RNA sequence: GGGAACGACUCGAGUAGAGUCGAAAAAGUGAGAAACGUUCCGGCGCUGUAGGAUGUGGCUGCGGCCGAUUAGGUAGAUGGUGGGGUAACGGCCCACCAUGCCGAUAAUCGGUACAGGUUGUGAGAGCUGUUACGAUACGUUCGCGUAUCGUAACAGAAAAGAAACAACAACAACAAC
Reactivity to DMS in 0.01 (KOAc 150mM, MgCl2 10mM, bicine 150mM(pH8.5), 24C), signal-to-noise 1, nucleotides 027 to 126: a080g000u020g010a060g000a140a090a110c060g020u020u000c020c010g000g020c010g010c030u000g000u000a090g000g000a090u010g040u000g010g010c020u000g010c030g040g050c000c000g010a000u000u000a110g000g010u000a150g000a060u000g010g010u000g000g010g020g000u000a110a070c300g000g000c000c000c000a020c000c000a010u000g000c000c000g010a180u020a000a010u000c000g010g030u000a050c140a120g000g020u020u010g000u010g010a140g000a140g000